The data come from the RNA Mapping Database (RMDB), library OK1LIB. This 177-nucleotide RNA was probed chemically with 2A3 and DMS. The reactions ran in a buffer of 150 mM KOAc, 10 mM MgCl2 and 150 mM bicine (pH 8.5), at 24 C. DMS adducts were read by reverse transcription with MarathonRT. The DMS profile rests on 1,151 reads.
[RMDB]
RNA sequence: GGGAACGACUCGAGUAGAGUCGAAAAGACGCCUAAUGGCGAAAAUGUAAAAUCAACUACACAAGAGAUAAAUACAAAUGCUAAAUCUCGGAACUAGUUGAUCUAGUCCAGCGGUGAGAUCCGCAGAAUGCCACUAGGAGUUCGCUCCUAGUGGCAUAAAAGAAACAACAACAACAAC
Reactivity to 2A3 in 0.01 (KOAc 150mM, MgCl2 10mM, bicine 150mM(pH8.5), 24C), signal-to-noise 2, nucleotides 027 to 126: g000a030c000g000c000c000u260a300a090u300g000g000c010g000a110a000a000a000u240g010u100a000a000a000a080u070c000a000a010c020u030a000c000a000c020a150a000g000a000g000a000u000a060a170a000u260a050c100a000a300a050u160g060c000u020a140a120a120u010c000u000c010g010g000a010a010c000u020a000g000u000u000g000a000u000c030u070a050g170u090c000c000a030g000c000g000g020u100g020a080g020a150u170c000c010g000c000a000g140a160
Reactivity to DMS in 0.01 (KOAc 150mM, MgCl2 10mM, bicine 150mM(pH8.5), 24C), signal-to-noise 2, nucleotides 027 to 126: g000a300c040g000c000c010u030a190a080u060g000g000c000g000a000a060a110a080u050g080u060a050a150a260a030u000c010a000a010c000u000a000c050a080c110a300a130g000a000g030a000u000a120a030a050u050a180c200a050a070a100u000g000c140u120a050a220a070u000c000u000c040g020g000a300a040c300u000a000g000u000u000g000a000u010c010u000a110g040u000c070c020a060g000c000g000g100u030g000a110g020a160u000c000c020g020c070a140g040a020